[RMDB]
RNA sequence: GGGAACGACUCGAGUAGAGUCGAAAACUGCACAGAGAACACCCAAGCUUACUUUGUAGUUCCCUUGGCUCAUAGUCUGUGCUAGAGUAAUAGCUGCUCUUUUCCUCUGCAUUGGAAGGAAUAUCUAGUUUAAAGACGCUUUCGAGCGUCUUUAAACAAAAGAAACAACAACAACAAC
Reactivity to DMS in 0.01 (KOAc 150mM, MgCl2 10mM, bicine 150mM(pH8.5), 24C), signal-to-noise 3, nucleotides 027 to 126: c140u000g010c020a010c020a030g000a100g020a070a120c200a110c300c010c010a060a020g020c080u010u050a030c120u000u000u040g050u000a090g000u020u010c020c070c000u000u010g000g000c030u000c140a050u010a110g010u000c010u030g020u010g050c010u010a010g030a100g010u020a050a110u010a110g000c110u030g010c010u000c000u000u000u010u000c000c000u000c140u010g000c130a140u030u000g000g010a100a030g000g000a070a070u030a060u000c020u000a100
Reactivity to 2A3 in 0.01 (KOAc 150mM, MgCl2 10mM, bicine 150mM(pH8.5), 24C), signal-to-noise 3, nucleotides 027 to 126: c050u050g030c020a000c010a020g070a000g010a070a030c010a040c050c010c010a000a020g000c020u100u150a040c010u120u100u290g110u270a080g000u040u000c010c000c000u000u020g040g020c030u050c030a040u030a090g040u000c040u020g000u020g030c020u020a020g020a000g070u130a040a130u050a190g080c100u050g030c010u060c000u040u020u050u000c000c000u000c040u060g040c040a120u050u200g010g080a100a080g010g010a040a030u040a070u130c070u040a050